[RMDB]
RNA sequence: GGGAACGACUCGAGUAGAGUCGAAAAGAGGCCACGCAUGCCCAGCGGGUGGCGGCCGAGACCGCAACGGUGCUGCGGGUGCUGGUGGAGCUGCUGCGUGACGAGGACAUCCAGCAGGUGAUCGACCAUUAGACGUCCUGUUCGCAGGACGUCUAAUAAAAGAAACAACAACAACAAC
Reactivity to 2A3 in 0.01 (KOAc 150mM, MgCl2 10mM, bicine 150mM(pH8.5), 24C), signal-to-noise 3, nucleotides 027 to 126: g050a020g080g000c010c000a030c040g010c000a010u250g220c030c000c000a000g000c040g000g060g000u030g030g000c000g020g000c040c130g180a070g060a240c000c000g000c010a000a030c010g000g180u060g000c000u020g040c080g000g030g000u030g000c010u060g070g040u030g000g010a040g030c020u000g000c000u000g020c010g150u130g020a110c080g120a070g090g080a010c000a020u060c010c000a000g010c010a010g000g050u070g050a040u060c070g070a050c000c020
Reactivity to DMS in 0.01 (KOAc 150mM, MgCl2 10mM, bicine 150mM(pH8.5), 24C), signal-to-noise 1, nucleotides 027 to 126: g000a170g010g000c010c030a010c130g030c000a000u000g000c000c030c040a050g030c000g000g000g000u000g010g010c000g000g020c000c150g000a200g010a200c010c000g000c040a040a020c000g000g050u010g010c000u000g050c130g010g000g000u000g000c030u020g040g000u030g030g000a070g000c030u000g020c000u000g000c300g010u010g010a100c040g000a190g020g000a110c000a000u020c280c050a070g000c030a020g000g000u030g000a100u000c070g000a100c080c030